[RMDB]
RNA sequence: GGGAACGACUCGAGUAGAGUCGAAAAUGGAAAAGGACAGUAUGGAAAUACGGGGAAGCAGGAGAUAGAUCCGGAAAAAUAAAGUUGAGACCAGACUGUAGACUGUCUUGAAUGCCAAGCUAAAGUGUUUAUACUUUAUUCAGUAAAUAAACAAAACAUCGUCAUUUUUAUUCGUAAAAAUGACGAUAAAAGAAACAACAACAACAAC
Reactivity to DMS in 0.01 (KOAc 150mM, MgCl2 10mM, bicine 150mM(pH8.5), 24C), signal-to-noise 2, nucleotides 027 to 156: u010g030g000a090a040a150a160g030g030a090c040a080g030u010a100u010g030g000a150a090a080u010a050c050g010g010g030g040a100a150g050c060a080g000g000a050g000a130u010a050g000a080u000c030c020g000g020a010a150a080a110a050u010a030a040a070g000u000u000g010a150g000a090c030c030a070g010a070c020u000g020u000a100g000a080c020u000g030u000c030u000u000g000a100a070u000g010c030c010a020a180g040c110u010a020a040a120g010u000g010u000u000u000a090u000a070c030u000u010u000a030u010u000c070a140g000u000a080a090a060u020a030a070a090c050a040a160a060a080c160
Reactivity to 2A3 in 0.01 (KOAc 150mM, MgCl2 10mM, bicine 150mM(pH8.5), 24C), signal-to-noise 1, nucleotides 027 to 156: u060g020g030a010a040a040a060g010g020a020c000a050g020u040a020u080g000g070a050a130a070u160a080c050g000g000g000g000a010a040g020c030a020g030g030a030g020a070u070a040g030a060u040c000c060g000g080a030a010a000a030a000u050a010a030a000g010u040u040g030a030g000a020c010c020a000g040a040c000u030g020u070a010g020a050c010u020g010u040c000u010u030g020a080a000u110g010c050c030a020a020g000c030u120a160a020a000g020u020g020u050u070u000a080u020a030c000u110u080u080a090u170u060c020a000g020u020a050a000a050u090a030a090a000c070a040a120a000a050c080